[RMDB]
RNA sequence: GGGAACGACUCGAGUAGAGUCGAAAAGAUAUGGACGGUCGGGAGGUCGAUGAGUACACGAAUCGGAAACGAUUUGUACGAGACUCGACCGUCCUAAGUCAAACUUUCACUGUUCGCAGUGAAAGAACGAAGUGUUAUUCUUCGGAAUAACACUUCGAAAAGAAACAACAACAACAAC
Reactivity to 2A3 in 0.01 (KOAc 150mM, MgCl2 10mM, bicine 150mM(pH8.5), 24C), signal-to-noise 6, nucleotides 027 to 126: g010a000u010a010u030g000g000a000c010g020g020u030c030g130g300g120a300g160g160u030c030g140a300u190g020a030g000u020a000c090a010c220g300a050a020u000c000g000g000a000a010a000c000g010a010u030u000u000g000u010a000c010g040a030g000a150c040u010c100g000a000c000c000g000u000c000c000u000a000a010g000u000c000a000a030a110c010u010u000u010c000a010c010u020g070u120u120c300g020c120a010g010u000g010a020a000a000g020a050a020
Reactivity to DMS in 0.01 (KOAc 150mM, MgCl2 10mM, bicine 150mM(pH8.5), 24C), signal-to-noise 6, nucleotides 027 to 126: g010a010u000a020u010g000g000a020c000g020g010u000c010g000g030g030a280g020g010u000c020g000a160u020g020a270g010u000a010c020a050c300g010a020a000u000c000g020g000a010a010a030c000g010a010u000u000u010g010u000a000c000g000a040g010a020c000u000c010g000a000c010c010g000u000c000c000u000a000a070g000u000c010a140a080a290c000u000u000u000c000a000c010u000g010u000u010c170g020c010a020g020u000g000a000a010a010g000a050a110